[RMDB]
RNA sequence: GGGAACGACUCGAGUAGAGUCGAAAAAGUCACCUAUUACGAUAGGUGACAUUUGAACCAGCGAACAAUUCAGUUGCGAGAUUCGAGGUUUCAGUCUGAAUAAUAGUAGCCAUUACGAUGGCUACAACUCACUCCCGACUGUUCGCAGUCGGGAGAAGACCUAUCAAGUCUUCGGACUUGAUAGGUCAAAAGAAACAACAACAACAAC
Reactivity to 2A3 in 0.01 (KOAc 150mM, MgCl2 10mM, bicine 150mM(pH8.5), 24C), signal-to-noise 2, nucleotides 027 to 156: a000g010u000c000a000c000c010u020a040u010u120a110c290g030a020u000a000g010g000u000g000a000c000a020u010u030u060g040a040a000c030c000a040g150c030g000a000a000c020a080a050u000u000c000a000g000u000u000g000c000g000a020g000a000u000u000c000g010a040g060g030u130u270u300c050a040g130u030c010u000g020a000a000u090a030a020u050a000g000u000a000g000c000c000a000u000u060a050c280g100a020u000g000g020c000u000a010c010a000a000c030u090c040a050c050u000c000c000c000g000a000c000u020g050u130u090c180g010c140a010g000u020c000g010g000g000a000g000a000a000